The record gives the reactivity of an RNA of 207 nucleotides to 2A3. The RNA was probed in 150 mM KOAc, 10 mM MgCl2 and 150 mM bicine (pH 8.5) at 24 C.

[RMDB]
RNA sequence: GGGAACGACUCGAGUAGAGUCGAAAACCCCGUGUGGAACACACGACUAAGCUUCGGCUUAGUAAGAGCAACUUAGGAUGGUAGGCUCCCCGGCGUGUCUCGAACCAUGCCGGGCCAAACCCAUAGGGCUGGCGGUCCCUGUGCGGUCAUCAUUCAACGUAAAUUUAGGCUUCGGCCUAAAUUUACGAAAAGAAACAACAACAACAAC
Reactivity to 2A3 in 0.01 (KOAc 150mM, MgCl2 10mM, bicine 150mM(pH8.5), 24C), signal-to-noise 2, nucleotides 027 to 156: c000c000c010c000g010u030g000u000g010g200a160a040c080a000c000a010c090g030a010c010u000a000a010g010c000u020u150c250g040g000c000u010u010a000g020u040a060a030g010a010g000c010a020a080c060u150u120a110g020g020a020u060g030g040u030a060g060g040c000u020c010c000c000c010g010g010c000g030u020g010u010c100u110c260g070a050a030c030c000a000u010g010c010c000g000g000g000c010c000a010a020a000c000c000c000a010u000a010g020g000g000c030u070g140g080c100g070g030u120c010c000c000u000g010u000g030c180g020g010u020c010a040u020c000a010u000u070c030a060a080
For 2A3 the reverse transcriptase was SuperScript II with manganese.